An RNA of 177 nucleotides, treated with DMS and 2A3 and read out base by base. For DMS the reverse transcriptase was MarathonRT. 2A3 adducts were read by reverse transcription with SuperScript II with manganese. Reactivities are rounded to 0.1 and cut off at 0 and 3. The reactions ran in a buffer of 150 mM KOAc, 10 mM MgCl2 and 150 mM bicine (pH 8.5), at 24 C. For DMS, 4,297 sequencing reads were counted.

RNA sequence: GGGAACGACUCGAGUAGAGUCGAAAAGCGGUGUCCCCGAUGAGUCCUACCAGCAGCGCUUCAUUACCACCCUGUGCGCUGCAGCCGGCCAAAUCGCCGAACUGCUCGCCAAGUGGAAGAGCACGCCCCUAGGGACUGGAUUCGUCCAGUCCCUAGGAAAAGAAACAACAACAACAAC
Reactivity to DMS in 0.01 (KOAc 150mM, MgCl2 10mM, bicine 150mM(pH8.5), 24C), signal-to-noise 3, nucleotides 027 to 126: g000c070g010g030u010g000u030c050c020c020c050g000a090u030g000a070g010u000c000c020u000a110c080c050a080g010c040a050g000c030g020c040u010u020c060a100u020u030a280c060c030a060c030c060c050u010g000u030g000c020g000c040u000g010c020a030g000c260c050g030g000c000c130a060a110a150u030c220g030c020c020g010a090a120c040u000g000c020u000c000g000c000c020a100a070g000u010g010g010a090a060g040a060g010c020a040c100g000c030c070
Reactivity to 2A3 in 0.01 (KOAc 150mM, MgCl2 10mM, bicine 150mM(pH8.5), 24C), signal-to-noise 6, nucleotides 027 to 126: g050c040g030g010u050g030u140c010c030c010c000g070a090u150g060a020g050u040c010c010u030a080c010c020a010g020c020a020g010c020g000c010u100u080c070a130u060u160a130c040c010a040c030c030c030u050g040u070g050c000g020c090u020g020c000a000g020c010c000g010g000c000c000a110a130a140u130c090g000c010c010g010a060a090c020u020g000c010u010c000g000c000c010a080a080g030u050g050g060a100a060g010a010g050c030a020c050g040c000c010